RNA sequence: GGGAACGACUCGAGUAGAGUCGAAAAGAUAUGGACGGAACUACAGCUGAACAGCCAACAGCUCGGAAACGAGACAUGGCUUCCCAGCUGCCGUCCUAAGUCAAACUCGACACUUCGGUGUCGAGAAGCACUUACACAUGUUCGCAUGUGUAAGUGCAAAAGAAACAACAACAACAAC
Reactivity to DMS in 0.01 (KOAc 150mM, MgCl2 10mM, bicine 150mM(pH8.5), 24C), signal-to-noise 3, nucleotides 027 to 126: g010a020u000a300u010g010g010a000c000g000g010a120a030c070u000a300c030a010g010c020u000g010a050a110c300a030g010c010c000a010a100c250a140g020c020u000c000g000g030a080a090a140c000g000a060g000a040c090a220u000g000g010c010u000u000c170c140c000a060g040c010u000g020c020c000g000u000c000c000u000a010a040g020u000c100a120a120a250c010u000c030g000a000c000a000c000u000u010c180g020g020u010g000u000c010g000a000g020a050a070
Reactivity to 2A3 in 0.01 (KOAc 150mM, MgCl2 10mM, bicine 150mM(pH8.5), 24C), signal-to-noise 2, nucleotides 027 to 126: g040a020u070a050u160g000g010a020c020g010g010a070a060c140u220a090c300a000g000c000u000g010a130a020c040a080g000c000c000a100a070c060a190g020c000u000c000g010g030a070a070a020c020g010a000g040a040c060a110u100g000g000c000u050u020c040c040c010a000g000c000u000g000c010c010g000u000c000c000u010a030a000g020u020c040a030a030a090c000u000c010g000a010c000a000c010u060u100c300g150g010u010g000u000c020g000a000g000a000a010
The data come from the RNA Mapping Database (RMDB), library TTRDEL.
Structure probing data (DMS and 2A3) for a 177-nucleotide construct.
The reactions ran in a buffer of 150 mM KOAc, 10 mM MgCl2 and 150 mM bicine (pH 8.5), at 24 C.